RNA sequence: GGGAACGACUCGAGUAGAGUCGAAAAGAAGAUGAAUUCACACCUGAGGAUGUUAAUAUGCAGAUUAUGGGUGUGGUUAUGCAGAGUGGUGUGAGAAAAGUUACAUAUGGUACUGCGCAUUGGUUGUCACCUACAAUGAGUUCGCUCAUUGUAGGUGAAAAGAAACAACAACAACAAC
Reactivity to DMS in 0.01 (KOAc 150mM, MgCl2 10mM, bicine 150mM(pH8.5), 24C), signal-to-noise 1, nucleotides 027 to 126: g020a090a120g000a150u000g000a110a030u000u010c020a030c040a020c030c030u000g000a160g030g010a110u000g030u000u000a090a130u010a060u010g020c020a030g010a090u010u000a090u010g000g000g000u010g040u000g030g000u000u000a050u030g010c010a050g000a100g010u020g010g020u000g010u000g000a090g000a040a110a120a080g030u000u000a040c050a010u000a080u000g000g000u000a020c040u000g010c040g030c080a080u010u020g000g010u010u000g000u000
Reactivity to 2A3 in 0.01 (KOAc 150mM, MgCl2 10mM, bicine 150mM(pH8.5), 24C), signal-to-noise 1, nucleotides 027 to 126: g050a050a000g010a040u190g060a000a150u120u060c010a000c000a000c000c000u020g030a050g040g020a020u020g020u060u110a160a010u120a160u280g030c020a000g000a050u000u070a090u270g040g000g000u020g000u000g010g000u060u010a010u060g000c030a000g030a020g140u180g050g000u000g000u030g000a050g100a030a180a000a000g020u030u100a030c010a020u150a040u080g070g000u010a050c030u050g000c010g000c040a100u010u100g200g000u080u070g030u000